[RMDB]
RNA sequence: GGGAACGACUCGAGUAGAGUCGAAAAUUAAAGGGUGUAGAAAGGAGAGCAGAAAACUGCUUUUCAAACAGAGUAAAACCAAAAGGUUACACGCACUCUGUCAAAAAGAUCGAAAGAUCAAAAAAAACAUGUAACAUGUGUUCGCACAUGUUACAUGAAAAGAAACAACAACAACAAC
Reactivity to 2A3 in 0.01 (KOAc 150mM, MgCl2 10mM, bicine 150mM(pH8.5), 24C), signal-to-noise 1, nucleotides 027 to 126: u110u080a120a010a000g000g030g000u030g000u030a090g070a150a090a010g020g010a010g010a000g000c000a000g070a050a300a060a110c020u010g000c000u020u010u020u000c010a040a050a030c030a000g070a020g050u080a050a070a000a070c020c030a080a300a050a290g020g010u000u030a020c030a000c050g020c000a000c030u000c010u010g010u020c020a080a000a060a080a020g000a000u000c010g030a120a010a020g000a000u000c000a010a060a000a000a000a000a040a080
Reactivity to DMS in 0.01 (KOAc 150mM, MgCl2 10mM, bicine 150mM(pH8.5), 24C), signal-to-noise 2, nucleotides 027 to 126: u000u010a130a080a050g000g010g020u000g010u000a070g020a130a110a110g010g000a020g010a010g020c010a020g000a180a070a070a250c020u000g000c000u000u000u000u000c000a130a070a060c040a070g000a110g040u000a040a060a030a040c030c010a040a070a120a090g030g000u000u000a040c100a080c120g000c050a030c000u000c000u000g010u000c140a040a070a070a060a080g010a010u000c000g010a070a070a130g000a000u010c000a010a000a000a040a050a050a060a200

This 177-nucleotide RNA was probed chemically with 2A3 and DMS. The DMS profile rests on 2,373 reads. 2A3 adducts were read by reverse transcription with SuperScript II with manganese. Source: RMDB library M2PK90, as collected in RNAgym.